Structure probing data (DMS and 2A3) for a 207-nucleotide construct. The data come from the RNA Mapping Database (RMDB), library PDB130. The RNA was probed in 150 mM KOAc, 10 mM MgCl2 and 150 mM bicine (pH 8.5) at 24 C. For DMS the reverse transcriptase was MarathonRT. The DMS profile rests on 2,731 reads.

RNA sequence: GGGAACGACUCGAGUAGAGUCGAAAAGGAAAGAUGGAAAACAAACUCUGGUCCUCAAUCCGCGUGGGGUAAAUCCCACUAACGGCGUUGCCUCGCUUUCACAAGCGGGUGCAGUUCCUGCGCUGGAGAAGCGUGUUACCGUUUCGGUAUCUCAGCCCUGUGUAUUAAGCUUCGGCUUAAUACACAGAAAAGAAACAACAACAACAAC
Reactivity to DMS in 0.01 (KOAc 150mM, MgCl2 10mM, bicine 150mM(pH8.5), 24C), signal-to-noise 2, nucleotides 027 to 156: g010g050a040a060a060g020a070u000g010g000a140a060a120a080c170a140a080a080c040u000c010u000g010g010u010c000c020u000c070a040a100u000c000c050g070c030g000u000g040g020g020g000u000a090a060a170u000c000c000c000a080c000u000a070a030c040g010g030c140g020u010u010g010c020c020u010c010g000c010u000u000u010c250a090c250a000a090g000c000g060g010g100u010g020c000a080g030u000u000c010c020u010g000c050g000c010u000g060g020a160g000a090a080g000c030g010u010g020u010u010a030c040c020g000u000u010u010c070g040g060u000a020u000c040u010c040a140g020c100c150
Reactivity to 2A3 in 0.01 (KOAc 150mM, MgCl2 10mM, bicine 150mM(pH8.5), 24C), signal-to-noise 2, nucleotides 027 to 156: g060g010a030a040a030g070a040u180g030g050a050a120a050a090c060a050a080a060c060u050c060u140g080g090u020c000c000u010c020a020a060u020c010c010g030c040g030u020g000g010g000g000u030a060a060a160u170c000c010c010a010c020u030a120a010c040g010g000c020g060u070u010g010c020c000u000c000g000c020u060u130u170c170a110c040a080a000g000c000g030g000g030u110g030c000a000g020u020u020c010c000u050g010c000g010c020u040g020g020a110g020a070a010g020c020g000u040g060u050u040a040c050c040g000u000u070u170c040g070g000u040a070u050c080u010c050a040g000c000c010